[RMDB]
RNA sequence: GGGAACGACUCGAGUAGAGUCGAAAAGGGGAUGAAUUAGUUUAGAUAUUUAAGUAAUCCAUGAAAAUUCAUCAGAAUUUUGUAAUAUUGCUUAGAUAAAACCAUGGGCAGUACAUGGCAUCUCCACCAAAAAGAUUCGUUGCUUCGGCAACGAAUCCCCUUUAUUAAUGUUCGCAUUAAUAAAGGGAAAAGAAACAACAACAACAAC
Reactivity to DMS in 0.01 (KOAc 150mM, MgCl2 10mM, bicine 150mM(pH8.5), 24C), signal-to-noise 1, nucleotides 027 to 156: g000g010g010g050a040u000g000a030a150u000u010a100g000u010u000u010a110g010a300u000a030u000u000u000a000a030g000u000a010a050u000c130c090a070u000g000a030a010a040a010u000u010c020a240u020c300a240g020a020a000u000u000u000u000g010u020a220a220u010a070u000u000g000c000u000u030a020g000a020u000a010a070a040a160c000c020a060u000g020g030g020c150a210g020u000a130c020a030u000g010g000c040a020u000c010u020c000c000a190c020c020a020a020a050a050a180g050a000u040u040c020g000u000u000g020c030u000u010c300g000g000c010a000a010c000g000a000a010u000c000
Source: RMDB library ARCHII, as collected in RNAgym. This 207-nucleotide RNA was probed chemically with DMS. For DMS the reverse transcriptase was MarathonRT. Conditions: 150 mM KOAc, 10 mM MgCl2 and 150 mM bicine (pH 8.5), 24 C.